Structure probing data (DMS and 2A3) for a 177-nucleotide construct. The 2A3 profile rests on 3,158 reads. 2A3 adducts were read by reverse transcription with SuperScript II with manganese. It was measured as part of the RMDB library TTRDEL. Reactivities are given for positions 27 through 126.
[RMDB]
RNA sequence: GGGAACGACUCGAGUAGAGUCGAAAAGAUAUGGAAUGUGUAGGCGCGAAACAUAGUGUCGGAAACGACAUUGGAGCCUAGACAUUCCUAAGUCAAACGUGUGCUAAACUUCGGUUUAGCACACGAACAUAAAUCCGACGUUCGCGUCGGAUUUAUGAAAAGAAACAACAACAACAAC
Reactivity to DMS in 0.01 (KOAc 150mM, MgCl2 10mM, bicine 150mM(pH8.5), 24C), signal-to-noise 3, nucleotides 027 to 126: g000a020u010a300u010g000g000a010a000u000g010u000g000u010a000g010g020c010g010c130g020a090a110a170c250a110u020a030g030u000g010u010c010g000g000a080a090a200c010g020a020c000a020u000u000g010g000a260g000c010c000u000a000g010a010c000a010u000u000c000c000u000a020a070g010u000c040a100a070a230c020g010u000g010u000g000c000u000a000a000a000c000u000u010c150g020g000u000u000u000a010g010c000a000c000a000c000g010a050a070
Reactivity to 2A3 in 0.01 (KOAc 150mM, MgCl2 10mM, bicine 150mM(pH8.5), 24C), signal-to-noise 2, nucleotides 027 to 126: g050a000u090a070u270g000g000a040a000u020g010u020g100u040a000g030g020c040g030c130g280a110a160a010c080a130u300a070g040u020g000u010c000g000g000a070a050a010c010g000a010c010a000u010u030g140g040a050g010c000c000u000a010g010a020c000a000u000u000c000c000u020a060a010g080u020c030a170a050a020c010g000u000g020u000g020c000u000a020a000a000c010u040u060c270g110g000u000u030u020a000g000c000a000c000a000c010g000a010a000